[RMDB]
RNA sequence: GGGAACGACUCGAGUAGAGUCGAAAAUCUGGCUCCUCUGCACUAACUCUUGCUCUCACCCAGCUAAUCCCUGCCUCGCCCUGGCUGCCCCAGGGGCUGACCAUUAACAGCCAGCCCUGCCCAUCUUUAAGACACUACGUUUCGACGUAGUGUCUUAAAAAGAAACAACAACAACAAC
Reactivity to DMS in 0.01 (KOAc 150mM, MgCl2 10mM, bicine 150mM(pH8.5), 24C), signal-to-noise 2, nucleotides 027 to 126: u000c060u040g030g000c000u000c000c010u000c030u000g000c090a070c020u000a050a050c130u010c030u000u000g000c010u000c050u000c040a080c030c010c020a050g000c050u000a030a060u030c040c000c000u030g080c060c010u010c060g000c020c000c050u010g000g000c020u000g010c020c010c000c060a180g000g000g000g030c000u020g010a070c010c030a100u020u040a090a180c260a130g000c000c000a040g030c010c000c010u000g000c020c000c000a040u000c110u000u000
Reactivity to 2A3 in 0.01 (KOAc 150mM, MgCl2 10mM, bicine 150mM(pH8.5), 24C), signal-to-noise 3, nucleotides 027 to 126: u050c020u010g070g000c010u030c010c000u030c010u020g060c020a030c070u080a100a020c010u060c040u080u070g010c000u020c010u020c030a070c000c000c010a010g000c020u040a010a140u080c030c000c000u010g020c000c000u000c010g000c000c000c030u010g060g010c030u050g010c020c000c000c000a020g000g000g000g000c000u010g020a030c010c000a070u100u140a130a060c030a040g010c000c000a000g000c030c000c000u030g000c020c000c020a080u060c030u000u010